[RMDB]
RNA sequence: GGGAACGACUCGAGUAGAGUCGAAAAAAAAAAGAUAUGGACGAAGAACUACGCAAACCUUAGUGCUGAAGUGGUAUCGGAAACGAUACCAUGGAGCUAAGGUGCGCUUCGUCCUAAGUCAAAAAAAGUUACAAUCUAACUUCGGUUAGAUUGUAACAAAAGAAACAACAACAACAAC
Reactivity to DMS in 0.01 (KOAc 150mM, MgCl2 10mM, bicine 150mM(pH8.5), 24C), signal-to-noise 3, nucleotides 027 to 126: a000a050a080a090a060a070g010a030u000a210u000g000g000a020c000g010a010a010g010a080a010c130u020a300c040g020c010a020a080a030c000c000u000u000a010g020u010g000c230u010g000a050a180g000u000g000g000u000a000u000c000g020g000a060a030a060c000g000a010u000a000c000c000a010u000g000g000a040g010c000u000a010a000g000g010u000g000c010g000c000u000u000c000g000u000c000c000u010a010a060g000u010c000a010a010a070a140a020a070a150
Reactivity to 2A3 in 0.01 (KOAc 150mM, MgCl2 10mM, bicine 150mM(pH8.5), 24C), signal-to-noise 3, nucleotides 027 to 126: a000a000a000a000a000a000g050a010u040a000u060g000g000a000c010g000a000a020g030a080a070c180u280a050c300g010c030a100a180a210c000c000u020u020a000g000u020g220c300u080g030a020a010g000u010g000g010u010a010u000c000g000g000a010a050a030c000g000a000u000a010c010c000a000u020g000g020a030g000c000u010a000a000g000g010u010g000c010g010c000u000u010c000g000u010c000c000u010a000a000g010u000c040a050a000a110a020a000a110a060
Structure probing data (DMS and 2A3) for a 177-nucleotide construct. For DMS the reverse transcriptase was MarathonRT. The DMS profile rests on 4,631 reads. It was measured as part of the RMDB library TTRDES.